[RMDB]
RNA sequence: GGGAACGACUCGAGUAGAGUCGAAAAGCGGACAACUUAGCCCGAUAACUGCGUGGGGUGUCGGUCUGACCACUUGACGUCUUACCAAUCUUCAUUCACACUGGGCGCAUGGCGCUGCAGCCGGUGACGGCCCAGCAGUGUUCGCACUGCUGGGCCGAAAAGAAACAACAACAACAAC
Reactivity to 2A3 in 0.01 (KOAc 150mM, MgCl2 10mM, bicine 150mM(pH8.5), 24C), signal-to-noise 2, nucleotides 027 to 126: g020c000g000g070a140c000a150a090c000u130u220a050g020c000c010c050g000a010u080a170a070c060u080g010c030g100u110g000g000g000g060u050g100u080c050g000g060u010c060u040g010a020c010c010a030c000u070u160g000a040c000g020u010c000u020u040a110c000c040a020a020u000c020u120u100c000a040u020u080c030a000c020a020c140u060g000g050g000c040g060c080a120u110g240g000c030g000c010u070g060c020a000g060c000c000g030g000u040g020a040